[RMDB]
RNA sequence: GGGAACGACUCGAGUAGAGUCGAAAAUUGAUUCGAAAAUCAAAACAAACUAAAGUGAUGGAUCCUCUACGGCCGGAGUGGACUCGUCACUCGAAAAGAGUAUCCCUGUCGGGUACCAAAAAUGGGGAAAUGGUUAAUAAAUCUAGACCAGCGCUGACCCUACCAAAAUAUUCGUAUUUUGGUAGGGAAAAGAAACAACAACAACAAC
Reactivity to DMS in 0.01 (KOAc 150mM, MgCl2 10mM, bicine 150mM(pH8.5), 24C), signal-to-noise 1, nucleotides 027 to 156: u000u000g020a070u010u000c000g040a080a140a120a110u000c000a030a020a090a220c040a110a120a210c080u000a090a010a050g040u010g000a000u000g010g000a050u010c020c000u000c000u000a110c000g000g000c040c020g000g000a090g000u000g000g000a040c030u070c020g030u000c020a000c010u010c010g010a060a130a050a190g000a120g020u000a040u000c040c010c050u030g010u010c090g000g010g000u000a040c010c040a020a030a090a020a120u000g010g030g020g000a090a040a100u010g000g050u000u010a130a120u010a080a050a050u010c080u010a150g000a040c010c000a080g010c060g010c040u000g010a250
Reactivity to 2A3 in 0.01 (KOAc 150mM, MgCl2 10mM, bicine 150mM(pH8.5), 24C), signal-to-noise 3, nucleotides 027 to 156: u030u020g000a000u080u060c070g120a100a090a040a110u070c060a020a060a030a110c080a110a070a010c100u260a120a030a020g010u010g000a010u020g000g060a020u000c000c000u000c050u090a070c040g120g050c090c030g020g010a010g010u070g000g020a000c020u020c020g010u010c000a000c000u010c020g080a050a050a020a010g040a010g020u010a020u050c000c000c000u010g180u110c050g050g000g000u020a050c000c000a090a060a000a070a230u140g010g010g000g000a040a120a070u040g010g040u030u110a090a040u090a110a230a030u030c040u020a010g050a050c020c010a000g000c030g010c100u020g030a010
The record gives the reactivity of an RNA of 207 nucleotides to DMS and 2A3. Reactivities are given for positions 27 through 156.